Background
Chemical mapping of a 207-nucleotide RNA with 2A3. For 2A3 the reverse transcriptase was SuperScript II with manganese.

[RMDB]
RNA sequence: GGGAACGACUCGAGUAGAGUCGAAAAUUGCGGCCGGGCAGAGGCGCUCCUCACAUCCCAGAUGGGGUGGCGGGGCAGAGGCGCUCCCCACAUCUCAGACGAUGGGCAGCCGGGCAGAGACGCUCCUCACUUCCUAAACGGGAUGGCGGCUGGGAAAACUAGUAUACGCUUUCGAGCGUAUACUAGUAAAAGAAACAACAACAACAAC
Reactivity to 2A3 in 0.01 (KOAc 150mM, MgCl2 10mM, bicine 150mM(pH8.5), 24C), signal-to-noise 1, nucleotides 027 to 156: u100u100g130c020g020g010c020c010g100g020g070c180a060g010a020g090g100c130g100c200u100c010c000u060c000a020c000a010u000c000c000c010a030g110a160u190g000g000g030g000u040g000g040c110g010g000g030g040c010a010g010a040g220g070c080g030c100u030c040c020c000c000a040c010a010u000c100u040c100a130g030a060c120g090a130u000g010g000g000c010a000g040c050c050g000g040g000c120a060g010a040g010a030c010g000c000u000c010c000u010c000a000c010u250u300c010c000u100a150a060a030c060g000g040g060a010u010g050g100c050g000g000c000u040g000g080g000a000a200a000